[RMDB]
RNA sequence: GGGAACGACUCGAGUAGAGUCGAAAACAGCAAGAUCACCGCGGCCCUCACCAAGUUCCGCUCCGGUGCGCCGCAGGGCAUGCGCAUCGUCAACCAGCGUCAAUUCGACCGGCUGAGUGGAUACCUCCGUCAAUCCUUGGUUCGCCAAGGAUUGACGAAAAGAAACAACAACAACAAC
Reactivity to 2A3 in 0.01 (KOAc 150mM, MgCl2 10mM, bicine 150mM(pH8.5), 24C), signal-to-noise 3, nucleotides 027 to 126: c020a010g100c070a040a090g020a080u060c020a020c050c050g000c000g080g030c010c030c000u020c010a050c040c030a060a010g020u070u040c020c000g000c000u000c000c010g000g010u000g000c010g020c000c020g090c080a110g020g080g030c060a040u130g000c020g000c010a010u020c010g050u080c060a060a090c010c010a030g050c000g060u050c060a040a230u120u160c030g040a040c010c000g050g000c020u020g020a030g060u020g020g010a030u080a100c000c000u050c020
Reactivity to DMS in 0.01 (KOAc 150mM, MgCl2 10mM, bicine 150mM(pH8.5), 24C), signal-to-noise 1, nucleotides 027 to 126: c030a110g000c040a140a130g010a060u000c010a060c040c020g030c070g000g000c000c050c000u000c010a070c040c080a030a060g010u020u000c000c030g000c060u010c020c040g000g050u000g030c010g080c100c180g000c070a030g000g000g000c150a140u040g000c090g000c010a020u000c000g010u050c190a060a180c200c060a040g000c100g000u050c100a140a190u100u000c000g000a130c020c020g050g000c180u000g000a000g020u000g000g010a050u050a050c000c010u000c150